[RMDB]
RNA sequence: GGGAACGACUCGAGUAGAGUCGAAAAUUAUUAGCGAACACCCUAAUCCUGUAAGCUUCCAGUGGCUUUGGAUACUAAACCUAUGCUGUACAGAUCUUGAUCUGCCAUAGUCAACGUGUGAUGCUCCCGAGCUAUCACGAUUCGUCGUGAUAGCUCGAAAAGAAACAACAACAACAAC
Reactivity to DMS in 0.01 (KOAc 150mM, MgCl2 10mM, bicine 150mM(pH8.5), 24C), signal-to-noise 2, nucleotides 027 to 126: u000u010a110u000u000a100g040c060g000a120a040c050a090c050c060c050u000a080a070u000c020c050u010g000u010a040a070g000c040u000u000c050c130a100g010u010g000g010c020u000u010u000g010g000a060u000a070c120u010a030a100a130c170c050u000a050u000g030c100u000g010u010a110c020a030g000a030u000c060u000u000g000a010u000c010u000g000c050c040a030u000a040g000u000c080a050a080c160g000u000g030u020g000a130u000g000c070u000c020c050
Reactivity to 2A3 in 0.01 (KOAc 150mM, MgCl2 10mM, bicine 150mM(pH8.5), 24C), signal-to-noise 2, nucleotides 027 to 126: u150u070a070u060u090a020g030c010g020a060a000c010a040c040c020c000u060a070a050u060c020c020u110g120u210a060a000g050c040u060u020c110c030a110g030u020g070g010c030u030u060u050g080g010a030u060a100c080u120a050a080a040c010c000u040a040u080g000c020u040g040u090a020c020a020g010a020u050c030u130u210g060a030u020c010u050g030c050c000a040u010a020g000u030c020a000a060c050g040u040g030u020g040a030u100g000c000u020c010c050
Structure probing data (DMS and 2A3) for a 177-nucleotide construct. It was measured as part of the RMDB library OK2TST. For DMS the reverse transcriptase was MarathonRT. The 2A3 profile rests on 2,062 reads. Reactivities are given for positions 27 through 126.